[RMDB]
Background
The data come from the RNA Mapping Database (RMDB), library M2RFPK. An RNA of 207 nucleotides, treated with 2A3 and DMS and read out base by base. For DMS, 2,662 sequencing reads were counted. For 2A3, 1,678 sequencing reads were counted.
RNA sequence: GGGAACGACUCGAGUAGAGUCGAAAAAGGAUCACCCCGUCCGAUGCGGAAGUUCGUGCUUCCGUCGAACGCGAAAGUCGGACGGCGGCCAUGAGUCGCAACGCAAAGCCGCGGCAAGUGGAGUUAGAAAAGCGUUUGAAGUUCGCUUCAAACGCAAGAGUAUGAAUAUGUUCGCAUAUUCAUACUCAAAAGAAACAACAACAACAAC
Reactivity to 2A3 in 0.01 (KOAc 150mM, MgCl2 10mM, bicine 150mM(pH8.5), 24C), signal-to-noise 3, nucleotides 027 to 156: a000g110g000a080u090c050a090c020c000c010c000g010u000c010c000g010a000u030g000c000g010g010a000a010g010u130u300c180g150u300g100c000u020u020c010c010g000u000c010g010a170a060c060g000c020g130a150a030a000g050u000c010g000g000a000c000g010g020c050g040g010c000c000a020u020g000a020g000u020c010g000c040a060a130c090g030c150a190a150a060g040c070c070g000c020g000g000c030a050a000g000u000g020g060a090g050u110u070a070g090a100a100a030a010g000c010g000u000u000u000g000a000a010g010u050u080c150g030c090u000u010c000a010a000a010c000g000c000a010a000
Reactivity to DMS in 0.01 (KOAc 150mM, MgCl2 10mM, bicine 150mM(pH8.5), 24C), signal-to-noise 2, nucleotides 027 to 156: a090g010g000a160u000c040a110c020c000c000c020g020u000c010c000g040a080u000g020c060g000g010a020a040g000u010u000c170g000u040g020c000u010u000c030c000g050u000c020g000a130a050c090g030c130g000a050a060a160g000u010c000g010g020a000c000g020g010c040g000g020c020c000a020u000g010a300g240u000c000g030c000a040a040c020g030c020a130a280a250g030c030c040g060c000g030g000c020a020a300g020u000g000g000a100g000u010u000a130g000a100a090a100a230g010c000g040u010u000u000g000a010a000g000u000u000c300g030c020u000u000c000a010a000a010c000g010c000a000a030